[RMDB]
RNA sequence: GGGAACGACUCGAGUAGAGUCGAAAACAUCCCUGCAAAACGAGGUGGUUGCGGGGAAGCUUCUGGAUAGAAGCAAAGCAAUCAUUUGCGACGGUAUGUCAAUAGACUGACAUGUGAAUAAGGGCACGUAAGUACUAUCUUUCGAGAUAGUACUUACAAAAGAAACAACAACAACAAC
Reactivity to DMS in 0.01 (KOAc 150mM, MgCl2 10mM, bicine 150mM(pH8.5), 24C), signal-to-noise 9, nucleotides 027 to 126: c200a140u010c000c000c010u000g000c120a080a060a100a120c050g000a090g000g020u010g010g010u000u000g000c000g000g010g020g020a090a100g010c000u000u000c000u000g010g040a080u050a020g000a010a010g010c000a050a080a190g000c010a010a010u000c020a030u010u000u010g010c030g010a140c150g000g000u020a010u000g000u000c010a060a120u030a120g000a150c240u000g000a020c000a020u000g000u010g000a090a070u020a080a080g000g000g000c210a080c170
Reactivity to 2A3 in 0.01 (KOAc 150mM, MgCl2 10mM, bicine 150mM(pH8.5), 24C), signal-to-noise 9, nucleotides 027 to 126: c040a080u070c000c000c000u020g060c050a030a030a030a030c040g020a040g010g040u050g000g010u000u010g000c010g010g050g060g050a020a040g000c000u010u000c000u030g110g160a090u090a300g000a010a000g000c000a030a030a000g010c000a000a010u030c010a020u030u020u130g070c030g020a040c030g090g040u110a020u020g010u000c000a020a070u090a130g110a090c070u020g000a010c000a020u040g020u030g090a100a040u150a100a070g020g030g020c050a020c110